[RMDB]
RNA sequence: GGGAACGACUCGAGUAGAGUCGAAAAGAUAUGGAACCCUUGACGCUUUGAUCUAAUCUCGGAAACGAGAGUUAGGGAGCGUCUUGGGUUCCUAAGUCAAAGGGUGAGUGCUUCGGCACUCACCCAAUCUUAUUUUUAAGUUCGCUUAAAAAUAAGAAAAAGAAACAACAACAACAAC
Reactivity to 2A3 in 0.01 (KOAc 150mM, MgCl2 10mM, bicine 150mM(pH8.5), 24C), signal-to-noise 1, nucleotides 027 to 126: g000a010u010a010u080g000g000a010a000c020c000c000u000u010g010a000c000g060c020u300u300u050g000a010u020c000u000a010a030u020c000u000c000g000g000a000a000a000c000g010a000g000a010g020u020u010a010g000g000g030a010g020c010g000u010c000u000u000g000g010g000u000u000c000c000u000a000a000g000u000c010a020a110a130g000g040g000u000g000a000g000u020g000c060u130u130c300g130g030c050a010c030u030c020a000c000c000c020a010a000
Reactivity to DMS in 0.01 (KOAc 150mM, MgCl2 10mM, bicine 150mM(pH8.5), 24C), signal-to-noise 1, nucleotides 027 to 126: g000a010u000a030u020g000g000a020a010c000c000c000u000u000g010a010c000g030c000u020u000u020g000a020u010c000u000a020a010u000c000u000c000g040g010a000a010a030c000g010a000g010a040g010u010u000a000g000g000g000a000g040c000g040u000c000u010u000g000g000g010u010u000c000c000u000a000a060g000u000c000a090a120a100g010g010g040u000g010a030g030u000g030c000u000u020c280g010g010c000a010c000u000c000a000c000c000c000a010a010
Source information: Chemical mapping of a 177-nucleotide RNA with 2A3 and DMS. The 2A3 profile rests on 1,640 reads. 2A3 adducts were read by reverse transcription with SuperScript II with manganese. The reactions ran in a buffer of 150 mM KOAc, 10 mM MgCl2 and 150 mM bicine (pH 8.5), at 24 C. The data come from the RNA Mapping Database (RMDB), library TTRDEL.